[RMDB]
Notes: Chemical mapping of a 177-nucleotide RNA with DMS and 2A3. 2A3 adducts were read by reverse transcription with SuperScript II with manganese. The RNA was probed in 150 mM KOAc, 10 mM MgCl2 and 150 mM bicine (pH 8.5) at 24 C.

RNA sequence: GGGAACGACUCGAGUAGAGUCGAAAACGCCGCAACACGUCGCGCGGCUGGAAAAGGCAGGCCAAUUCCCCAAGCGGGUACAGCUGGGCCCGAACAGAGUGGGAUGGGUUGAGGACGAAGUGCUGGACGUCAAAUAAUGGUUCGCCAUUAUUUGACGAAAAGAAACAACAACAACAAC
Reactivity to DMS in 0.01 (KOAc 150mM, MgCl2 10mM, bicine 150mM(pH8.5), 24C), signal-to-noise 2, nucleotides 027 to 126: c080g000c010c010g040c010a020a040c040a070c040g030u000c020g000c070g000c020g000g000c010u010g010g000a070a060a250a060g000g010c030a300g000g010c000c010a100a300u030u000c000c000c000c040a200a160g050c130g000g020g000u000a100c260a120g000c020u000g030g010g010c020c010c020g000a140a180c060a010g010a180g010u000g010g000g000a020u010g000g000g000u000u000g000a100g020g000a040c040g000a040a130g000u010g000c010u010g010g000a300
Reactivity to 2A3 in 0.01 (KOAc 150mM, MgCl2 10mM, bicine 150mM(pH8.5), 24C), signal-to-noise 1, nucleotides 027 to 126: c010g000c010c010g000c010a000a000c020a000c020g040u040c000g020c000g000c010g270g230c030u020g060g000a080a240a000a090g040g050c030a010g010g040c000c010a000a070u170u060c000c000c000c000a180a020g100c220g050g030g000u020a110c070a040g060c000u070g000g270g000c030c000c000g020a040a010c020a010g040a000g040u020g010g090g010a040u030g000g000g030u070u050g010a020g030g000a080c030g090a110a010g110u090g140c020u020g010g040a020